This 207-nucleotide RNA was probed chemically with 2A3 and DMS. Reactivities are given for positions 27 through 156. Source: RMDB library OK3TST, as collected in RNAgym.

RNA sequence: GGGAACGACUCGAGUAGAGUCGAAAACAUAUAAAACUAUGGGAUGCAAUAUUGUGGAAGUGCUCCUCCUUAUUGAUGCCAUGUGAUAUAUGAUAAACCAGAUAUAUGAUAUCUGGUGAACGAUUAGGGGCUCUUUCUAAGCUAAUCCACAUUGAUAGGUGAUGAUUAGUUUCGACUAAUCAUCACCAAAAGAAACAACAACAACAAC
Reactivity to 2A3 in 0.01 (KOAc 150mM, MgCl2 10mM, bicine 150mM(pH8.5), 24C), signal-to-noise 3, nucleotides 027 to 156: c010a000u190a020u080a140a110a020a030c040u050a060u050g050g020g020a010u070g090c020a090a050u060a100u210u130g070u080g040g020a030a070g030u030g070c040u020c020c000u010c000c010u120u090a060u010u070g080a040u070g100c090c030a070u060g020u020g130a020u030a020u000a010u100g030a050u080a030a070a020c010c000a000g000a000u030a000u020a040u070g220a030u020a010u040c000u000g000g000u000g000a040a010c010g050a050u050u100a030g000g000g010g040c000u010c000u040u070u000c000u070a040a020g020c010u030a070a030u000c020c030a030c010a100u150u180g080a080u100a180
Reactivity to DMS in 0.01 (KOAc 150mM, MgCl2 10mM, bicine 150mM(pH8.5), 24C), signal-to-noise 2, nucleotides 027 to 156: c020a040u000a080u010a040a040a100a100c060u010a020u010g030g010g040a090u010g070c060a080a090u010a060u020u000g040u020g000g040a040a190g010u020g020c120u000c010c000u010c080c020u000u000a040u010u000g000a130u010g010c030c010a060u010g010u010g000a300u000a040u000a030u000g010a120u010a070a130a040c000c000a010g010a020u000a030u010a140u000g020a110u000a020u010c000u000g020g030u000g010a000a100c100g010a120u030u010a100g030g030g000g000c010u000c050u010u000u000c060u000a090a110g030c060u000a070a220u010c010c030a040c000a050u010u010g000a180u010a080